[RMDB]
RNA sequence: GGGAACGACUCGAGUAGAGUCGAAAAGAGGCUAAGCGAGUGGAAAACAUCAAAUCUUCUCGCGCUUACAUGAACUCAGCUAUUGGGAAUAGGAGAAUCAAACUAUGAUCGGGGAUGUUUGUUCGAAGUGCGGCGGUGAUCACCGAAAGUGGACGCAGUCUAGACUGCGUUUCGACGCAGUCUAGACAAAAGAAACAACAACAACAAC
Reactivity to 2A3 in 0.01 (KOAc 150mM, MgCl2 10mM, bicine 150mM(pH8.5), 24C), signal-to-noise 4, nucleotides 027 to 156: g060a000g040g010c070u080a080a080g000c020g000a010g000u030g000g060a050a030a040a130c090a160u210c090a040a080a120u000c000u020u000c000u000c000g000c010g000c000u030u030a030c000a080u140g040a060a040c020u020c040a000g040c020u060a060u160u170g010g000g050a050a110u020a110g030g040a040g010a050a080u140c050a070a060a050c040u080a080u240g030a040u160c030g030g000g000g000a010u040g060u070u060u050g040u100u050c020g030a080a000g020u030g050c010g020g000c010g000g030u050g040a050u100c070a020c020c010g030a060a060a020g020u060g010g020a010c010g000c070a000
Reactivity to DMS in 0.01 (KOAc 150mM, MgCl2 10mM, bicine 150mM(pH8.5), 24C), signal-to-noise 2, nucleotides 027 to 156: g040a050g000g050c000u000a060a040g050c020g040a060g010u000g040g000a010a080a090a090c090a250u040c230a150a100a180u000c040u020u000c000u000c020g020c070g030c100u030u130a000c120a100u000g020a160a140c040u010c050a150g000c030u000a050u010u000g000g000g010a120a050u000a060g000g000a060g000a180a070u000c110a060a060a090c090u000a050u020g030a040u000c020g030g030g040g000a120u000g010u000u000u000g060u000u000c020g050a060a060g000u000g040c020g000g030c020g070g020u000g010a110u000c030a150c000c020g040a020a040a120g040u000g030g020a110c130g000c140a110

Structure probing data (2A3 and DMS) for a 207-nucleotide construct. For DMS the reverse transcriptase was MarathonRT. The reactions ran in a buffer of 150 mM KOAc, 10 mM MgCl2 and 150 mM bicine (pH 8.5), at 24 C. Source: RMDB library OK3TST, as collected in RNAgym. The 2A3 profile rests on 2,048 reads.